[RMDB]
An RNA of 177 nucleotides, treated with 2A3 and DMS and read out base by base. For DMS the reverse transcriptase was MarathonRT. For 2A3, 2,691 sequencing reads were counted. For DMS, 1,999 sequencing reads were counted. The RNA was probed in 150 mM KOAc, 10 mM MgCl2 and 150 mM bicine (pH 8.5) at 24 C.
RNA sequence: GGGAACGACUCGAGUAGAGUCGAAAAUUAUUUGUCUAAUGUAACACCAAAGACCUGAAUCCUUCUUAACACGUCGCCACUGCAUCAGAGAGACGUGAUCACACACGCUACAGAACGCAGGGGAAAACCUAAUGCAUGGUUUCGACCAUGCAUUAGGAAAAGAAACAACAACAACAAC
Reactivity to 2A3 in 0.01 (KOAc 150mM, MgCl2 10mM, bicine 150mM(pH8.5), 24C), signal-to-noise 3, nucleotides 027 to 126: u090u070a050u080u120u120g070u000c030u040a070a110u090g020u050a070a040c010a070c080c050a050a110a020g040a050c010c030u050g040a040a030u090c000c000u030u080c040u070u090a070a010c010a000c090g080u060c030g020c060c030a070c030u040g010c020a080u070c060a090g180a000g000a010g010a270c000g010u010g020a050u090c010a020c020a020c000a010c070g030c050u080a030c000a050g080a110a020c060g030c020a020g040g000g000g010a010a110a000a050
Reactivity to DMS in 0.01 (KOAc 150mM, MgCl2 10mM, bicine 150mM(pH8.5), 24C), signal-to-noise 3, nucleotides 027 to 126: u000u000a110u010u000u020g020u010c050u010a100a060u010g000u020a050a060c100a100c050c060a030a060a170g010a060c020c050u000g010a090a110u010c040c030u000u010c090u010u010a080a120c110a050c170g010u000c100g010c060c030a080c020u000g020c060a120u000c040a070g010a180g000a100g010a040c010g020u000g010a060u000c150a110c140a140c030a010c040g010c030u000a040c070a090g000a070a070c080g000c030a020g000g010g000g010a100a030a050a060